[RMDB]
RNA sequence: GGGAACGACUCGAGUAGAGUCGAAAAGACGCCUGUGUGGCGAAGCGAGCAUGAGAUGGAGCCGCAAGAGAAGAUGAGAUAGAAGCGGCUCGAUAGAUUGCUCGCAAAAAGAUCCAUCUCACAGAGAGGAUUAUAGUGCUUUCGAGCACUAUAAUCCAAAAGAAACAACAACAACAAC
Reactivity to 2A3 in 0.01 (KOAc 150mM, MgCl2 10mM, bicine 150mM(pH8.5), 24C), signal-to-noise 3, nucleotides 027 to 126: g130a000c010g020c030c010u100g080u070g100u120g130g020c010g010a030a000g010c000g000a000g000c000a010u040g000a080g010a100u060g050g000a000g030c040c000g010c050a080a030g140a000g020a150a090g060a130u300g060a060g040a160u180a130g110a160a000g000c000g000g000c000u000c010g020a010u000a000g050a000u000u000g000c000u000c000g020c000a000a000a000a040a000g030a000u020c010c010a030u000c020u020c030a130c010a080g070a000g010a040
Reactivity to DMS in 0.01 (KOAc 150mM, MgCl2 10mM, bicine 150mM(pH8.5), 24C), signal-to-noise 3, nucleotides 027 to 126: g000a120c020g030c020c010u000g040u010g010u050g010g000c020g010a150a100g000c000g010a030g000c010a000u000g010a300g000a040u000g020g000a060g020c000c020g030c010a100a120g000a180g010a190a070g030a190u030g000a150g000a140u050a110g010a200a130g000c000g010g000c000u010c030g020a020u000a050g000a140u000u000g000c000u000c010g000c000a000a000a060a080a050g010a030u000c010c000a090u010c000u050c060a170c080a090g040a080g010a190

Annotation:
Chemical mapping of a 177-nucleotide RNA with 2A3 and DMS. The RNA was probed in 150 mM KOAc, 10 mM MgCl2 and 150 mM bicine (pH 8.5) at 24 C. The 2A3 profile rests on 3,060 reads. High DMS reactivity at an A or C suggests that its Watson-Crick edge is free.